Annotation: This 207-nucleotide RNA was probed chemically with 2A3.
RNA sequence: GGGAACGACUCGAGUAGAGUCGAAAAGGCUGCAGGGGUCUCUGCAGGACAUGCUGUGGCAGCUGGACCUCAGCCCUGGGUGCUGAGGCCUUGAAGGUCACUCUUCCUGCAAGGACUACGUUAAGGGAAGGAACUCUGGCUUCCAGGUAUCUCCAGGGUCAGCCAUCUAAUUCGUUAGAUGGCUGACAAAAGAAACAACAACAACAAC
Reactivity to 2A3 in 0.01 (KOAc 150mM, MgCl2 10mM, bicine 150mM(pH8.5), 24C), signal-to-noise 1, nucleotides 027 to 156: g010g030c090u120g010c110a100g020g120g010g030u060c020u000c000u060g000c000a010g020g000a040c090a210u170g010c060u050g010u020g010g000c010a050g040c010u040g060g060a210c000c000u000c000a000g020c000c000c090u240g110g000g100u170g040c100u000g000a010g000g000c010c000u020u020g100a150a060g020g040u010c000a020c010u040c030u090u030c000c010u060g000c020a060a150g040g000a020c000u000a090c030g030u090u130a060a040g000g000g010a070a000g000g000a090a010c020u000c020u140g010g000c000u060u100c000c040a020g000g030u060a090u050c010u020c000c020a070g100g000

The reactions ran in a buffer of 150 mM KOAc, 10 mM MgCl2 and 150 mM bicine (pH 8.5), at 24 C. Reactivities are given for positions 27 through 156.